[RMDB]
RNA sequence: GGGAACGACUCGAGUAGAGUCGAAAAACGUUAAUCAUUAAAGCCAAUUUCGAGUUUGCCAGGAUUUAGAAAGAUCAUUGUAUCUAAAGAGAGAGGCAACCAUGUAUCAUCAAAUGGUAAAUAAGCGACCCUUUUAUUACCAAGAGGCCAGGCAAAGCAUGGCCUCGACAUUCGUGUCGAGGCCAUGAAAAGAAACAACAACAACAAC
Reactivity to 2A3 in 0.01 (KOAc 150mM, MgCl2 10mM, bicine 150mM(pH8.5), 24C), signal-to-noise 2, nucleotides 027 to 156: a000c030g020u090u050a200a020u160c000a110u050u150a170a100a050g010c010c020a100a080u000u010u110c090g050a080g080u040u040u080g030c020c040a020g000g010a020u050u090u100a070g070a060a150a020g010a000u090c090a100u070u230g060u170a020u000c050u040a010a110a020g060a010g040a000g010a060g000g000c000a020a010c020c000a020u120g060u070a080u170c040a000u020c010a050a000a160u010g040g000u030a040a070a100u110a050a050g070c030g080a080c000c000c000u010u030u020u030a110u020u020a010c000c030a000a050g010a040g090g010c000c060a030g120g010c130a050a050a020g120
Reactivity to DMS in 0.01 (KOAc 150mM, MgCl2 10mM, bicine 150mM(pH8.5), 24C), signal-to-noise 2, nucleotides 027 to 156: a110c030g010u010u000a100a160u010c030a130u020u000a090a050a160g000c050c040a040a110u000u010u010c080g000a130g020u000u000u000g010c030c010a140g010g000a100u000u010u020a060g030a170a070a050g010a020u010c040a090u000u000g010u010a130u010c010u010a050a030a120g000a210g020a150g010a070g030g010c030a040a010c070c060a050u010g010u000a070u010c050a080u000c100a080a110a240u000g000g000u020a030a030a210u000a040a120g040c120g000a130c080c030c010u010u000u000u000a060u000u000a060c020c080a070a120g040a160g040g000c010c040a050g010g000c050a100a050a140g010